[RMDB]
RNA sequence: GGGAACGACUCGAGUAGAGUCGAAAAAACACUGGUACGAUACGUCGUACCAGUGCAGUCGUUGGGAUGGAACGCAAUUAAAUACAUGUGUGACGUGUAUUUGCGAACGACGUAAUUAUUUUUCAAAAUCACGCUAUCGUGUUCGCACGAUAGCGAACGCACCAAUAUAGUUCGCUAUAUUGGUGCGAAAAGAAACAACAACAACAAC
Reactivity to 2A3 in 0.01 (KOAc 150mM, MgCl2 10mM, bicine 150mM(pH8.5), 24C), signal-to-noise 4, nucleotides 027 to 156: a010a000c010a000c000u000g000g000u000a010c000g000a010u020a040c260g120u010c010g000u020a000c000c000a000g000u000g020c000a020g020u020c000g010u020u040g090g020g100a160u160g090g090a140a040c010g000c030a020a030u170u150a120a060a000u020a010c000a000u040g050u020g120u180g260a070c020g020u020g000u000a010u030u040u030g000c030g040a010a030c020g020a000c040g000u030a060a020u160u120a120u020u160u010u020u110c080a060a080a080a120u140c060a050c080g010c000u000a000u000c010g000u010g040u120u080c160g020c040a000c000g010a000u000a010g000c000g010a000a010
Reactivity to DMS in 0.01 (KOAc 150mM, MgCl2 10mM, bicine 150mM(pH8.5), 24C), signal-to-noise 1, nucleotides 027 to 156: a080a030c000a020c010u000g010g030u000a020c000g010a030u000a060c300g060u000c020g010u000a000c000c000a000g010u000g030c000a050g050u000c030g030u000u000g020g000g050a160u000g020g000a060a110c000g000c020a080a220u020u000a040a030a010u010a010c030a010u000g050u000g000u000g010a090c060g050u000g000u000a030u000u000u000g030c030g020a070a110c000g000a100c000g020u000a060a080u000u000a130u000u000u000u000u000c030a010a000a070a030u000c130a150c110g020c010u000a010u000c010g000u000g040u010u000c240g010c010a000c000g010a020u010a000g010c010g000a010a020
Structure probing data (2A3 and DMS) for a 207-nucleotide construct. The 2A3 profile rests on 2,413 reads. For DMS, 2,817 sequencing reads were counted. Conditions: 150 mM KOAc, 10 mM MgCl2 and 150 mM bicine (pH 8.5), 24 C.